[RMDB]
RNA sequence: GGGAACGACUCGAGUAGAGUCGAAAAGUGUCUAUUCGUAGACACAGCGGGAUAUGGAGAAUGAAAGGAAGGAUGAUGACCAGCAAUCGGAAACGAUUGCUGCAAGUCCACCUUUCAUCAGUUCUCCUAAGUCGAGGAUGAGCUAUUCGUAGCUCAAGAGACCAUUGAUAUUCGUAUCAAUGGUCUCAAAAGAAACAACAACAACAAC
Reactivity to 2A3 in 0.01 (KOAc 150mM, MgCl2 10mM, bicine 150mM(pH8.5), 24C), signal-to-noise 5, nucleotides 027 to 156: g000u000g000u000c010u020a070u100u160c270g150u080a000g000a000c000a000c020a010g110c060g040g020g000a040u050a050u130g010g010a010g000a000a030u120g020a050a060a010g040g030a120a190g030g010a020u020g020a040u080g010a030c020c020a000g010c000a010a000u000c000g000g040a040a030a050c010g000a000u000u000g000c000u000g000c000a090a080g000u010c000c000a020c010c000u000u000u000c010a010u000c000a000g020u020u020c000u000c000c000u020a050a010g030u030c030g040a060g150g050a180u120g000a020g000c000u010a010u080u160c230g120u080a010g000c010u010c000a010a040
Reactivity to DMS in 0.01 (KOAc 150mM, MgCl2 10mM, bicine 150mM(pH8.5), 24C), signal-to-noise 2, nucleotides 027 to 156: g000u020g020u000c000u000a040u010u010c300g060u010a030g010a000c000a020c010a100g030c100g010g020g000a100u000a140u000g020g040a070g010a070a050u000g010a060a120a120g020g010a170a030g000g010a190u010g010a050u000g020a300c300c000a020g010c010a020a000u000c030g000g010a170a140a290c000g010a050u010u000g010c000u000g000c010a000a220g020u000c010c060a220c000c000u000u000u000c020a120u000c060a290g000u000u010c010u000c010c000u010a040a150g000u010c040g000a110g010g010a140u000g000a030g040c020u000a070u010u000c260g040u000a000g000c000u000c000a000a110